Chemical mapping of a 177-nucleotide RNA with DMS and 2A3. The reactions ran in a buffer of 150 mM KOAc, 10 mM MgCl2 and 150 mM bicine (pH 8.5), at 24 C. The 2A3 profile rests on 2,330 reads.

RNA sequence: GGGAACGACUCGAGUAGAGUCGAAAAAGUGGAUCCGUACACGCUAGACUAGGUACGAGUAUCGCUAGUACCAUGGUACUAUCACUGUCAUGUGCUAGUCGCGCGAUCAGAUGUCUAGUGCUGAUCGUCCGCGUGUAUUGUUCGCAAUACACGCGGAAAAAGAAACAACAACAACAAC
Reactivity to DMS in 0.01 (KOAc 150mM, MgCl2 10mM, bicine 150mM(pH8.5), 24C), signal-to-noise 3, nucleotides 027 to 126: a030g000u000g000g020a050u010c040c030g000u000a050c040a120c090g000c000u000a030g010a010c000u010a160g010g040u000a060c020g010a060g020u000a050u010c090g030c050u000a010g000u000a110c070c050a080u010g000g000u010a010c060u000a040u010c080a080c140u010g010u010c120a070u000g000u000g000c020u000a020g010u000c100g030c210g020c020g020a040u000c010a030g000a070u010g000u000c060u000a030g000u000g010c050u000g000a030u000c010g010
Reactivity to 2A3 in 0.01 (KOAc 150mM, MgCl2 10mM, bicine 150mM(pH8.5), 24C), signal-to-noise 2, nucleotides 027 to 126: a000g100u090g040g060a040u000c010c030g000u020a030c110a010c070g020c020u030a010g020a020c000u040a040g200g030u070a060c010g030a030g080u160a040u170c010g010c010u000a010g010u010a030c040c050a050u080g110g010u090a030c040u070a050u160c010a020c130u080g130u200c040a070u110g000u020g020c000u000a000g040u110c060g000c050g000c000g090a030u040c010a020g040a090u110g040u010c020u050a040g030u020g070c020u020g020a040u010c010g080